Structure probing data (DMS and 2A3) for a 177-nucleotide construct.
[RMDB]
RNA sequence: GGGAACGACUCGAGUAGAGUCGAAAAGCUCUAGGAGACUAGAGCGAUACGUUAGAGAGCUCGUGGCAUGACUAACGGAUAGCCAGGUACCAGGUUGCCAGAGGACAUAGCUAUAGCUAUGUCCAAAGAGGUUACAUACCUUCGGGUAUGUAACCUCAAAAGAAACAACAACAACAAC
Reactivity to DMS in 0.01 (KOAc 150mM, MgCl2 10mM, bicine 150mM(pH8.5), 24C), signal-to-noise 1, nucleotides 027 to 126: g010c000u000c000u020a020g000g010a120g000a160c010u060a000g000a010g000c010g000a020u040a050c030g000u000u000a090g000a170g000a190g060c040u000c120g010u000g010g110c020a150u050g000a120c000u040a090a010c050g000g000a190u000a090g000c040c000a110g000g020u000a070c060c020a060g000g020u000u000g010c020c000a040g060a220g000g010a000c000a000u000a020g020c010u030a210u030a100g070c000u000a000u000g020u040c000c010a000a020a060
Reactivity to 2A3 in 0.01 (KOAc 150mM, MgCl2 10mM, bicine 150mM(pH8.5), 24C), signal-to-noise 2, nucleotides 027 to 126: g000c000u000c010u010a000g010g000a060g020a040c000u000a000g000a010g070c000g000a010u040a020c020g060u000u010a060g000a020g010a010g250c000u040c300g060u130g040g000c050a030u080g020a110c050u020a070a000c050g000g080a100u020a000g030c000c000a020g000g020u020a020c000c000a020g000g000u000u120g080c010c000a000g070a100g070g000a000c000a010u000a000g000c030u170a110u040a300g000c000u000a000u000g010u040c000c000a000a000a020
Source: RMDB library OK1LIB, as collected in RNAgym. Values cover nucleotides 27 to 126. The 2A3 profile rests on 867 reads. The reactions ran in a buffer of 150 mM KOAc, 10 mM MgCl2 and 150 mM bicine (pH 8.5), at 24 C.